[RMDB]
Structure probing data (DMS and 2A3) for a 177-nucleotide construct. The RNA was probed in 150 mM KOAc, 10 mM MgCl2 and 150 mM bicine (pH 8.5) at 24 C. Values cover nucleotides 27 to 126. For 2A3 the reverse transcriptase was SuperScript II with manganese. For DMS the reverse transcriptase was MarathonRT. The DMS profile rests on 5,365 reads.
RNA sequence: GGGAACGACUCGAGUAGAGUCGAAAAGAUAUGGAUACCUACACCUGCAACAGCUCGGAAACGAGACAUGCAGAUGUAGGGUAUCCUAAGUCAAACCUAAUCCUGGAGUUCGCUCCAGGAUUAGGAAGCCCUAAUAUAGGUUCGCCUAUAUUAGGGCAAAAGAAACAACAACAACAAC
Reactivity to DMS in 0.01 (KOAc 150mM, MgCl2 10mM, bicine 150mM(pH8.5), 24C), signal-to-noise 4, nucleotides 027 to 126: g010a060u010a300u000g000g000a010u000a010c000c000u000a000c000a010c010c010u000g010c000a020a100c260a180g000c000u010c000g000g000a090a110a220c000g000a000g000a030c090a190u000g000c010a000g020a010u000g010u000a010g020g000g000u000a010u000c000c000u000a030a080g010u000c020a110a120a160c000c000u000a000a010u000c000c000u000g000g000a010g010u000u010c230g010c000u010c000c000a010g000g000a000u000u010a000g000g000a040a050
Reactivity to 2A3 in 0.01 (KOAc 150mM, MgCl2 10mM, bicine 150mM(pH8.5), 24C), signal-to-noise 5, nucleotides 027 to 126: g010a010u070a030u180g000g010a000u010a010c010c000u000a000c010a010c010c000u010g020c020a060a060c030a300g040c010u000c000g040g040a100a070a040c010g020a000g050a070c030a070u050g000c010a010g000a010u010g020u010a060g070g000g000u010a000u000c000c000u010a080a030g030u000c050a080a040a140c000c000u000a000a000u000c000c000u000g020g000a010g000u110u210c270g150c180u000c000c000a000g000g000a000u000u000a000g000g000a000a000